[RMDB]
RNA sequence: GGGAACGACUCGAGUAGAGUCGAAAAGCGUGGACCAAGGCACCAUUUCUCAAGCCAUGCUGUGGUGGCGUCCCAUAUAAAGUAGAGGAAGAAGAGCACGGAUGUUAGCCCAGGGCCAAUCUUCCUCGAACUAAGAGUCCUUCGGGACUCUUAGUUCAAAAGAAACAACAACAACAAC
Reactivity to 2A3 in 0.01 (KOAc 150mM, MgCl2 10mM, bicine 150mM(pH8.5), 24C), signal-to-noise 1, nucleotides 027 to 126: g040c010g010u080g050g070a030c010c060a090a080g030g000c040a040c090c060a160u020u110u050c110u020c080a040a030g000c000c020a040u060g020c060u130g030u050g020g070u040g040g040c020g060u090c020c020c000a020u140a020u040a090a180a030g220u230a060g000a000g000g000a000a000g000a000a000g010a030g040c030a000c080g070g000a030u110g080u300u200a060g000c000c000c110a100g010g100g000c020c000a000a050u020c010u020u000c000c020u030c010
Reactivity to DMS in 0.01 (KOAc 150mM, MgCl2 10mM, bicine 150mM(pH8.5), 24C), signal-to-noise 2, nucleotides 027 to 126: g000c130g030u010g000g000a110c070c060a070a140g010g000c020a100c030c020a050u000u000u000c010u000c030a190a110g030c040c070a060u000g000c020u000g010u020g030g040u000g000g020c050g010u000c010c000c010a110u060a140u010a090a090a040g020u000a100g000a040g000g010a020a000g000a090a110g000a200g020c000a070c050g000g000a100u000g000u000u060a100g000c110c000c040a150g000g000g000c010c030a130a110u000c000u000u000c000c000u030c030